Overview: The data come from the RNA Mapping Database (RMDB), libraries RFM100 and RFMREP. An RNA of 177 nucleotides, treated with 2A3 and DMS and read out base by base.
RNA sequence: GGGAACGACUCGAGUAGAGUCGAAAAACUGGCUGCUACGGCAGCCAGAAUUGAGACGACAUACUUCCUUAUAUCCCCAUAUUCAGAAUUAAUCUAUGGAAUGUAAGGAAGUGUGUGGCUUCAGUAAUCUUUAGGCAAAAUUCGUUUUGCCUAAAGAAAAAGAAACAACAACAACAAC
Reactivity to 2A3 in 0.01 (KOAc 150mM, MgCl2 10mM, bicine 150mM(pH8.5), 24C), signal-to-noise 8, nucleotides 027 to 126: a000c000u000g010g010c000u000g000c010u030a050c270g130g000c000a000g000c000c000a000g000a000a000u050u030g000a020g010a010c090g010a000c010a000u000a000c000u000u000c000c000u000u000a010u000a010u050c100c040c010c010a000u040a030u110u160c070a040g150a160a110u200u140a140a100u140c030u040a000u010g000g000a010a000u010g000u000a000a010g000g000a000a000g000u000g000u000g000u000g030g010c010u040u030c010a090g020u120a100a150
Reactivity to DMS in 0.01 (KOAc 150mM, MgCl2 10mM, bicine 150mM(pH8.5), 24C), signal-to-noise 5, nucleotides 027 to 126: a120c010u000g000g000c010u000g020c000u000a090c210g050g010c000a010g030c010c000a000g000a030a030u010u000g000a020g010a040c010g000a020c000a000u000a010c010u000u000c000c000u000u000a010u000a020u000c150c060c010c020a020u000a030u020u020c200a100g000a130a160u030u010a110a090u010c150u000a010u010g000g010a170a010u000g010u000a010a000g000g000a030a000g000u000g010u000g010u000g010g030c010u000u000c010a020g010u010a100a090

2A3 adducts were read by reverse transcription with SuperScript II with manganese.